[RMDB]
RNA sequence: GGGAACGACUCGAGUAGAGUCGAAAAGCCAUAGACGAGCACGAAUCCGCUGCAAUUAAAAACGGGAGAACCGUUGGCGUAGUCUAUGAUCAGGGCGUAGCUAGAUUCCGAGAUGCCCGCAAUGCCCAGUAUUGCGAACGCGACGCCGACGACUAGGAACCGAGAGGAUAUUCGUAUCCUCUCGGUUAAAAGAAACAACAACAACAAC
Reactivity to DMS in 0.01 (KOAc 150mM, MgCl2 10mM, bicine 150mM(pH8.5), 24C), signal-to-noise 1, nucleotides 027 to 156: g010c060c010a020u000a030g020a000c020g000a210g030c020a120c040g000a070a120u000c020c020g060c020u010g030c060a060a250u020u000a040a030a060a070a070c000g010g000g010a080g000a060a050c140c010g050u000u000g060g020c010g020u010a180g020u000c000u000a030u020g020a100u000c090a090g000g070g040c010g020u000a060g010c080u000a150g020a220u000u000c010c080g000a180g030a120u000g010c020c010c010g000c040a030a020u010g010c000c120c020a120g020u000a170u000u000g010c010g000a070a020c020g000c000g040a040c000g010c000c000g020a040c040g000a130c040u000a120g030g040
Reactivity to 2A3 in 0.01 (KOAc 150mM, MgCl2 10mM, bicine 150mM(pH8.5), 24C), signal-to-noise 2, nucleotides 027 to 156: g070c010c010a050u050a010g050a000c050g000a030g070c040a010c080g040a060a090u090c040c020g060c160u180g040c140a060a140u180u260a170a130a070a000a020c010g000g030g010a080g020a190a140c090c000g010u030u030g030g000c000g020u020a010g000u000c020u030a020u070g080a050u090c080a070g000g080g000c040g070u010a030g050c000u050a020g010a170u130u130c050c030g040a070g040a100u090g030c000c000c000g020c000a060a010u070g000c000c030c080a040g030u090a040u020u050g010c000g050a040a000c030g000c010g040a000c000g000c000c000g040a080c020g040a040c140u120a050g190g020